[RMDB]
RNA sequence: GGGAACGACUCGAGUAGAGUCGAAAACGCUUGACCAAGGUUCGCAUCAGGUCAUGGUCGGCGUGACUCAUAUUGAUGCGGAAGACAUCCGCUCCUGCUUCAAAGAGCUUGCGGAUGACGGCUUCCACUACUACUCCCCGUUCGCGGGGAGUAGUAGAAAAGAAACAACAACAACAAC
Reactivity to DMS in 0.01 (KOAc 150mM, MgCl2 10mM, bicine 150mM(pH8.5), 24C), signal-to-noise 3, nucleotides 027 to 126: c010g000c010u000u010g020a020c000c010a090a080g020g000u000u010c100g040c130a100u010c080a030g000g040u000c040a100u000g000g020u010c020g010g020c000g020u000g020a090c050u030c060a100u010a110u020u000g000a060u000g020c060g020g000a020a020g020a160c010a020u010c010c010g010c010u000c220c100u000g030c010u000u000c190a090a130a190g020a020g030c020u000u000g020c010g010g010a040u000g000a120c180g030g000c000u000u000c000c050a210
Reactivity to 2A3 in 0.01 (KOAc 150mM, MgCl2 10mM, bicine 150mM(pH8.5), 24C), signal-to-noise 3, nucleotides 027 to 126: c000g020c010u110u300g000a010c000c000a030a070g090g010u170u200c050g000c060a160u130c090a070g030g050u020c000a060u050g020g020u020c020g010g000c010g000u040g030a010c010u030c150a140u160a110u220u270g050a090u080g040c030g020g000a000a000g010a010c000a020u000c000c000g020c020u040c030c030u100g000c010u020u100c110a150a130a080g100a010g010c020u060u030g000c000g000g000a000u000g020a020c040g080g000c010u000u000c000c000a000